[RMDB]
RNA sequence: GGGAACGACUCGAGUAGAGUCGAAAAACAACACGCUUCGGCGUGUUGUCGACGGAGGAAGCUGAGGACGCGCUUGUGCCGCAGCAGGGAUGCGCAGCGUAAAUCAGAGGUGAUUCGUCACCUCUAAUGAGGGUAUUUAAUUCGUUAAAUACCCUCAAAAAGAAACAACAACAACAAC
Reactivity to DMS in 0.01 (KOAc 150mM, MgCl2 10mM, bicine 150mM(pH8.5), 24C), signal-to-noise 9, nucleotides 027 to 126: a020c000a000a000c000a010c010g020c010u000u010c200g030g010c000g020u000g000u000u000g010u000c040g010a080c090g010g010a070g010g000a080a080g010c040u000g000a090g010g010a130c120g010c070g010c080u000u010g020u000g010c040c070g010c060a060g010c050a070g000g010g010a100u000g010c050g010c030a060g010c060g010u000a040a090a100u010c130a020g000a020g010g010u000g000a050u000u010c170g010u000c000a020c000c000u000c010u000a020a080
Reactivity to 2A3 in 0.01 (KOAc 150mM, MgCl2 10mM, bicine 150mM(pH8.5), 24C), signal-to-noise 4, nucleotides 027 to 126: a000c000a000a000c000a000c000g010c000u020u070c210g150g000c000g000u000g010u010u000g010u000c000g040a020c050g030g040a050g020g050a110a030g020c040u030g020a040g050g020a020c030g020c000g020c060u080u120g060u090g070c050c020g040c030a030g020c020a030g050g020g030a060u070g020c030g000c050a040g010c020g070u080a070a040a080u170c060a020g000a000g000g010u010g010a020u010u050c100g020u000c030a000c000c000u000c010u020a020a020